This 177-nucleotide RNA was probed chemically with DMS and 2A3.
For DMS the reverse transcriptase was MarathonRT.
The reactions ran in a buffer of 150 mM KOAc, 10 mM MgCl2 and 150 mM bicine (pH 8.5), at 24 C.
The DMS profile rests on 1,584 reads.
RNA sequence: GGGAACGACUCGAGUAGAGUCGAAAACCUUGAAAAAAGUGGUUGACGAGAGGAAGGAUUCGGUACAACCACAGGUCCCUUCCAUGGGUUUUACUUAUUCUUUGCCUAAUUUGAAGACUUUAAACAAACUCGGAUUACUAUUCGUAGUAAUCCGAGUAAAAGAAACAACAACAACAAC
Reactivity to DMS in 0.01 (KOAc 150mM, MgCl2 10mM, bicine 150mM(pH8.5), 24C), signal-to-noise 2, nucleotides 027 to 126: c000c000u000u010g000a000a050a070a090a100a130g000u000g010g000u000u000g000a120c000g000a070g020a100g020g020a090a090g000g000a110u010u000c050g000g030u010a120c020a020a020c020c010a000c000a130g020g000u010c040c040c030u010u000c090c140a090u010g010g010g000u000u000u000u000a040c090u000u000a090u010u000c040u000u000u000g010c010c020u020a040a130u010u000u000g010a100a110g000a060c060u000u000u020a060a060a110c140a050a110
Reactivity to 2A3 in 0.01 (KOAc 150mM, MgCl2 10mM, bicine 150mM(pH8.5), 24C), signal-to-noise 2, nucleotides 027 to 126: c000c000u010u060g100a070a050a000a000a010a000g000u020g000g010u010u000g040a030c000g000a010g000a060g210g130a240a080g050g040a090u120u020c010g030g020u060a080c000a000a020c000c010a010c000a000g010g080u070c030c030c000u100u090c070c040a110u090g000g110g010u010u070u030u060a000c000u040u060a120u210u050c020u140u070u080g030c000c000u090a170a180u220u030u100g050a060a030g060a080c060u160u210u220a090a100a050c120a050a130